Chemical mapping of a 207-nucleotide RNA with 2A3. The reactions ran in a buffer of 150 mM KOAc, 10 mM MgCl2 and 150 mM bicine (pH 8.5), at 24 C.
RNA sequence: GGGAACGACUCGAGUAGAGUCGAAAACACAAUUCUCUAAGCGAUGAGAAGCGUGUGGAAAAUUAGGGAAGAGCUACGGCUAUAAUCCUAAGAAAGCUUAUCUACAAGCGGAGGUAUUCUCAGAACGAAAACCAUUUGGCGUUCGCGCCAAAUGGAACUUAAGUCUGGUCUUCGGACCAGACUUAAGAAAAGAAACAACAACAACAAC
Reactivity to 2A3 in 0.01 (KOAc 150mM, MgCl2 10mM, bicine 150mM(pH8.5), 24C), signal-to-noise 1, nucleotides 027 to 156: c020a010c010a020a040u040u010c010u020c020u120a240a150g130c080g170a090u080g000a020g000a000a000g030c030g000u020g020u110g030g000a070a040a070a130u080u040a020g020g000g020a080a080g040a080g020c020u020a040c220g060g000c020u020a020u080a140a030u000c010c010u020a000a020g060a020a020a000g000c000u090u090a080u190c050u110a120c080a220a020g000c030g000g100a020g040g010u100a100u110u070c040u010c000a010g050a090a070c100g050a100a090a040a060c000c000a020u000u000u000g000g010c020g000u000u020c190g010c000g000c070c000a000a000a000u000g010g000a000a000